[RMDB]
RNA sequence: GGGAACGACUCGAGUAGAGUCGAAAAUAUCGAUCUCUGAAUAUAUUGAUAACCUUCACAAAUUUGCUGAUUAUUUUUGUAGCGCUCUUUCAUGAGAAAUGAUUGUCCCACAUGCAUAUCCAUGACUACCACAUAGGAAGUUCGCUUCCUAUGUGGUAAAAGAAACAACAACAACAAC
Reactivity to DMS in 0.01 (KOAc 150mM, MgCl2 10mM, bicine 150mM(pH8.5), 24C), signal-to-noise 2, nucleotides 027 to 126: u020a010u010c030g000a290u000c050u010c030u000g000a050a020u020a050u000a110u000u020g010a060u030a060a130c070c030u000u000c040a040c080a060a040a060u000u000u010g000c070u000g000a130u020u040a040u000u010u000u000u000g010u000a050g000c100g000c130u000c030u000u000u000c000a020u020g010a040g010a060a050a080u000g000a000u000u000g020u000c010c010c000a090c120a070u040g000c060a040u000a120u000c100c030a030u020g000a090c300u030
Reactivity to 2A3 in 0.01 (KOAc 150mM, MgCl2 10mM, bicine 150mM(pH8.5), 24C), signal-to-noise 8, nucleotides 027 to 126: u160a010u010c010g030a020u010c020u010c010u030g050a070a010u160a020u050a070u120u130g040a040u070a140a120c020c000u070u100c050a020c050a050a130a120u120u130u120g040c080u080g100a160u130u100a080u050u130u020u060u040g080u050a020g020c030g020c080u030c020u070u060u010c030a050u170g010a020g030a060a080a040u120g010a030u020u080g020u040c000c030c010a020c010a020u060g030c010a050u030a040u160c050c010a040u050g070a050c020u020
Conditions: 150 mM KOAc, 10 mM MgCl2 and 150 mM bicine (pH 8.5), 24 C. This 177-nucleotide RNA was probed chemically with DMS and 2A3. 2A3 is a SHAPE reagent: it acylates the 2'-hydroxyl of flexible nucleotides of all four kinds. Source: RMDB libraries RFM100 and RFMREP, as collected in RNAgym. For DMS the reverse transcriptase was MarathonRT.